[RMDB]
RNA sequence: GGGAACGACUCGAGUAGAGUCGAAAAGAUAUGGAGUCUACCCACCGCUGAGGGUCGUUGAAAUCGGAAACGAUGGAGACCGUAGGCGAGGACUCCUAAGUCAAACAUGGCGCUUCGGCGCCAUGAACAGUGAGUAAUACUUCGGUAUUACUCACUGAAAAGAAACAACAACAACAAC
Reactivity to DMS in 0.01 (KOAc 150mM, MgCl2 10mM, bicine 150mM(pH8.5), 24C), signal-to-noise 7, nucleotides 027 to 126: g000a070u010a220u000g010g010a020g010u000c000u000a130c030c000c020a300c100c010g010c020u000g000a300g010g000g000u000c000g010u010u010g010a110a110a030u000c020g000g000a100a060a140c000g000a020u000g020g000a150g010a020c000c000g000u000a300g000g000c010g010a080g020g000a020c000u000c000c010u010a040a080g010u010c090a120a110a220c010a000u000g000g000c000g010c000u000u010c180g030g010c010g020c000c010a000u000g010a070a170
Reactivity to 2A3 in 0.01 (KOAc 150mM, MgCl2 10mM, bicine 150mM(pH8.5), 24C), signal-to-noise 2, nucleotides 027 to 126: g060a050u160a150u260g000g000a010g010u000c010u050a260c030c020c000a020c000c010g040c020u030g010a070g010g110g010u000c010g220u300u080g010a020a020a010u010c000g020g000a050a040a060c020g000a010u010g000g010a030g000a010c000c010g010u020a010g000g000c000g000a000g000g000a000c000u000c000c000u040a210a020g180u140c080a040a040a060c010a010u000g000g000c000g000c020u060u090c260g110g070c050g020c220c000a010u000g000a010a010